Structure probing data (DMS and 2A3) for a 170-nucleotide construct.
The data come from the RNA Mapping Database (RMDB), library 15KLIB.
Conditions: 150 mM KOAc, 10 mM MgCl2 and 150 mM bicine (pH 8.5), 24 C.

RNA sequence: GGGAACGACUCGAGUAGAGUCGAAAAAUAGGCUUAUCAAGAGAGGUGGAGGGACUGGGCCGAUGAAACCCGGCAGCCAGAAAUGGUGCCUAUUCCUGCAGCGGAAACGUUGAAAGAUGAGCCGAUGAUAGAGUCCGGUUCGCCGGACUCAAAAGAAACAACAACAACAAC
Reactivity to DMS in 0.01 (KOAc 150mM, MgCl2 10mM, bicine 150mM(pH8.5), 24C), signal-to-noise 3, nucleotides 027 to 129: a060u040a030g030g020c020u030u000a000u090c020a080a140g050a150g000a200g100g050u100g040g000a000g010g080g010a080c100u000g010g050g210c000c050g000a060u050g020a090a050a100c090c060c030g000g000c020a190g010c030c020a090g010a110a030a120u050g000g060u060g040c000c000u080a100u030u010c050c000u040g000c080a030g040c010g020g000a020a150a120c040g050u040u080g000a030a070a130g010a030u030g020a020g000c000c010g000a080u080g010a060u050a090
Reactivity to 2A3 in 0.01 (KOAc 150mM, MgCl2 10mM, bicine 150mM(pH8.5), 24C), signal-to-noise 2, nucleotides 027 to 129: a000u140a020g000g000c010u040u040a000u050c070a110a030g090a040g040a010g150g030u040g030g140a120g010g010g000a010c010u050g030g090g000c010c020g060a040u090g070a050a050a030c050c020c000g010g010c010a030g190c000c000a010g060a000a070a020u150g030g000u010g000c000c000u000a080u010u020c010c010u000g020c000a030g010c000g040g010a010a010a000c030g040u000u000g050a110a090a000g010a000u010g010a020g010c030c010g000a060u040g000a020u080a080
For 2A3, 3,380 sequencing reads were counted.